RNA sequence: GGGAACGACUCGAGUAGAGUCGAAAAGGAUGCCACCGACACACCACCGCCCGCCUCGGCAACUUCCGGCCAGACCAGCUUGGACCUGGACACCGCGGCCAUCGAUGAGGCGCUGGGCCGCUCCGGCCCCGGUUAGGUAAUUCGUUACCUAACCGGGAAAAGAAACAACAACAACAAC
Reactivity to DMS in 0.01 (KOAc 150mM, MgCl2 10mM, bicine 150mM(pH8.5), 24C), signal-to-noise 5, nucleotides 027 to 126: g010g000a070u010g020c060c020a040c040c050g000a100c090a030c040a070c020c030a050c040c060g000c030c040c030g010c010c010u000c070g010g010c050a080a090c120u020u010c080c050g000g020c050c040a080g000a100c030c040a080g010c070u010u040g020g020a130c140c010u000g000g000a130c150a070c060c080g030c050g010g000c010c020a070u010c100g000a120u020g010a080g000g000c020g010c090u020g000g000g010c010c030g030c040u000c020c030g000g000c130
Reactivity to 2A3 in 0.01 (KOAc 150mM, MgCl2 10mM, bicine 150mM(pH8.5), 24C), signal-to-noise 9, nucleotides 027 to 126: g080g020a050u100g040c020c010a020c010c030g060a010c020a000c000a010c030c000a030c010c020g020c020c000c000g020c000c010u040c010g030g000c030a080a070c030u110u030c030c010g020g010c020c000a020g020a080c010c020a020g060c040u120u150g040g020a130c010c010u030g020g010a040c040a020c050c050g020c030g030g000c010c000a060u070c030g120a110u130g060a020g030g020c020g000c020u050g010g040g000c010c010g020c020u010c010c030g050g010c000